Chemical mapping of a 207-nucleotide RNA with DMS and 2A3. It was measured as part of the RMDB library OK3TST. The 2A3 profile rests on 750 reads. Conditions: 150 mM KOAc, 10 mM MgCl2 and 150 mM bicine (pH 8.5), 24 C.
[RMDB]
RNA sequence: GGGAACGACUCGAGUAGAGUCGAAAAAAGCAGAUCUCCAGCAUCUGCUCCGGGCAUUCACUGCAAUGGAGUCAGGUCCCCAGAACAUAGAGAGCACACAAGAUGGGAUCAGAUAGGGAAGCCUGGGCAAGCCUUGUUUACAAGGGUUCAAGGAGAGGCAUGAAGACGACUUCGGUCGUCUUCAUGCAAAAGAAACAACAACAACAAC
Reactivity to DMS in 0.01 (KOAc 150mM, MgCl2 10mM, bicine 150mM(pH8.5), 24C), signal-to-noise 1, nucleotides 027 to 156: a150a070g000c080a080g010a000u010c030u000c130c080a240g010c070a080u000c050u000g030c030u020c000c000g030g000g050c000a070u010u000c100a180c030u000g020c040a170a150u000g000g000a080g030u000c040a180g030g010u000c000c010c010c020a130g040a080a130c130a060u020a110g000a190g030a070g020c030a060c080a040c030a100a100g010a300u000g030g020g030a060u000c020a030g030a190u000a030g000g010g000a040a130g010c060c030u040g040g000g030c070a080a110g020c050c000u000u000g020u000u010u020a020c030a030a000g070g050g010u000u000c030a130a120g000g020a180g000a110g030
Reactivity to 2A3 in 0.01 (KOAc 150mM, MgCl2 10mM, bicine 150mM(pH8.5), 24C), signal-to-noise 2, nucleotides 027 to 156: a010a020g040c060a040g020a080u020c050u050c150c090a020g000c050a050u030c000u050g020c010u020c000c000g000g000g000c080a190u060u050c050a100c080u050g060c070a090a190u140g040g030a080g050u070c060a020g020g010u100c020c000c000c000a030g040a040a020c050a020u200a050g180a000g040a000g100c100a000c010a020c020a140a010g060a100u120g010g000g000a010u020c000a020g030a090u090a060g060g010g000a020a020g010c000c000u020g030g030g070c040a000a060g030c000c010u020u100g010u090u130u050a100c040a010a000g110g020g000u020u150c050a080a020g010g030a030g070a030g070